[RMDB]
RNA sequence: GGGAACGACUCGAGUAGAGUCGAAAAAAAAGAUAUGGAUCCUAUUUCGGAGGUCACAGAGGGUUCUCGGAAACGAGAACCUCCCCACCUGUGACUACCCACCCGAUGUAGGAUCCUAAGUCAAAAAGUUUGAUUAUAAGUUCGCUUAUAAUCAAACAAAAGAAACAACAACAACAAC
Reactivity to DMS in 0.01 (KOAc 150mM, MgCl2 10mM, bicine 150mM(pH8.5), 24C), signal-to-noise 1, nucleotides 027 to 126: a050a140a170a120g000a020u000a000u000g000g000a000u010c000c020u010a000u000u000u000c000g000g020a140g020g000u000c000a010c030a000g000a060g010g010g010u000u000c000u000c000g000g000a020a000a010c010g030a020g000a000a010c010c030u000c090c000c000c030a300c020c000u000g010u000g000a010c000u000a000c050c080c150a300c040c000c000g030a010u000g000u000a000g000g020a000u000c020c010u000a000a040g000u000c010a060a020a030a120a050